[RMDB]
RNA sequence: GGGAACGACUCGAGUAGAGUCGAAAAUGCUGUCCGCUCCCGAGGGUUCUACAAUCUCCGAGUGAAGAACUGCACUUUUGAGAGAUGUGUGUUUGGAGUGGUGGCGGAUACAAAAGUUGCCAUUUCCCACUGCUUCUUUGGGGAUUGCUGCUGCGCCGGUAGUCCAUUAAUUCGUUAAUGGACUACCAAAAGAAACAACAACAACAAC
Reactivity to DMS in 0.01 (KOAc 150mM, MgCl2 10mM, bicine 150mM(pH8.5), 24C), signal-to-noise 2, nucleotides 027 to 156: u000g030c050u010g030u010c020c010g000c000u000c020c010c000g000a100g020g020g010u000u020c030u000a090c060a070a070u010c000u010c010c040g010a050g030u010g010a160a170g020a100a150c110u010g000c010a030c010u000u000u000u000g020a250g010a050g000a050u010g010u010g000u000g010u000u010u010g010g030a090g030u000g000g020u000g000g000c030g060g000a070u010a050c050a050a050a080a070g010u000u000g000c030c020a100u000u010u010c010c000c010a160c110u010g010c030u000u000c010u000u000u010g000g000g040g030a080u010u000g010c000u000g030c020u000g000c040g010c120c130
Reactivity to 2A3 in 0.01 (KOAc 150mM, MgCl2 10mM, bicine 150mM(pH8.5), 24C), signal-to-noise 6, nucleotides 027 to 156: u080g010c030u050g040u050c010c020g000c020u030c010c010c010g020a080g050g080g020u140u070c030u100a020c020a050a100u010c010u000c010c010g020a010g020u030g030a080a160g070a300a090c110u160g030c030a010c010u020u100u240u270g200a280g000a010g010a040u050g040u020g000u010g030u100u090u140g050g020a040g010u060g010g000u020g010g000c000g000g010a040u090a100c080a020a130a010a010g030u050u040g040c020c000a030u040u080u150c010c010c010a040c040u080g050c030u070u080c000u040u150u070g010g000g000g010a020u010u070g020c030u020g000c000u010g010c030g030c010c040

The record gives the reactivity of an RNA of 207 nucleotides to DMS and 2A3. Conditions: 150 mM KOAc, 10 mM MgCl2 and 150 mM bicine (pH 8.5), 24 C. 2A3 is a SHAPE reagent: it acylates the 2'-hydroxyl of flexible nucleotides of all four kinds. It was measured as part of the RMDB library OK3TST.